[RMDB]
Conditions: 150 mM KOAc, 10 mM MgCl2 and 150 mM bicine (pH 8.5), 24 C. An RNA of 177 nucleotides, treated with 2A3 and read out base by base. Source: RMDB library RFM100, as collected in RNAgym.
RNA sequence: GGGAACGACUCGAGUAGAGUCGAAAAAGCCAGGGGAAACUCUGGUGGAGGCUUGUCGCAAUGCUGACGUGCAAAUCGCUUGUCUAACUUGAGUAUAGGGGCGAAAGACUAAUCGAACAACCUAGUACGCCUCAUGAAUCUUCGGAUUCAUGAGGCGAAAAGAAACAACAACAACAAC
Reactivity to 2A3 in 0.01 (KOAc 150mM, MgCl2 10mM, bicine 150mM(pH8.5), 24C), signal-to-noise 1, nucleotides 027 to 126: a000g020c000c000a000g040g020g000g040a070a000a000c000u040c000u000g000g000u030g010g030a060g010g000c090u070u050g070u110c000g030c070a000a050u250g030c140u080g030a160c060g050u060g020c000a070a120a120u100c000g000c000u000u140g050u040c040u150a000a150c000u030u080g010a050g030u050a000u050a100g030g000g060g010c000g000a000a000a000g010a030c020u070a050a060u010c000g000a100a000c030a000a070c000c020u000a040g010u040a000